[RMDB]
RNA sequence: GGGAACGACUCGAGUAGAGUCGAAAAUGAGGGAUAUCUUAACAAUUAUAAAUUCCGGAAGGUAUGCACGGACCUAGUUGGCAACCUAAGUAUAAUUGAAAAUUAUUCACACAAUGACCUACAGAACCCACUUUCGAUCUUUCGAGAUCGAAAGUGGAAAAGAAACAACAACAACAAC
Reactivity to 2A3 in 0.01 (KOAc 150mM, MgCl2 10mM, bicine 150mM(pH8.5), 24C), signal-to-noise 2, nucleotides 027 to 126: u070g000a150g030g010g000a000u010a060u010c150u100u020a050a050c010a000a000u000u070a070u110a120a080a080u190u000c000c000g120g070a080a000g020g050u030a110u110g000c010a070c100g180g000a040c040c050u060a090g050u130u090g070g000c020a050a050c000c000u020a050a040g050u000a030u010a010a070u050u020g000a040a030a030a030u040u030a010u020u090c000a000c010a000c000a200a090u110g060a210c000c020u110a100c050a070g050a010a030c000